The data come from the RNA Mapping Database (RMDB), library RFMREP. Structure probing data (DMS) for a 177-nucleotide construct. For DMS the reverse transcriptase was MarathonRT.

[RMDB]
RNA sequence: GGGAACGACUCGAGUAGAGUCGAAAACGUUUAUGCCUCUUUGGAAGGAUAGCAGCAUGAACCUGUCUCACUGCAGAAUUAUUUUGAGACAGGCUUAUGCUGCUAUCCUUCAAAAGAACGAAUGAGAUCUAAACAGGUUGUUCGCAACCUGUUUAGAAAAAGAAACAACAACAACAAC
Reactivity to DMS in 0.01 (KOAc 150mM, MgCl2 10mM, bicine 150mM(pH8.5), 24C), signal-to-noise 2, nucleotides 027 to 126: c070g000u000u010u000a300u040g020c090c050u010c010u000u000u000g000g020a020a010g010g000a010u000a000g010c000a010g010c010a000u010g000a000a010c000c000u000g010u000c000u000c000a060c160u000g020c260a120g040a150a140u020u010a140u000u000u000u030g010a010g010a010c010a010g000g010c030u010u000a000u000g000c020u000g000c000u000a000u000c000c000u000u000c000a010a000a020a010g000a010a080c060g010a070a070u000g000a120g000a090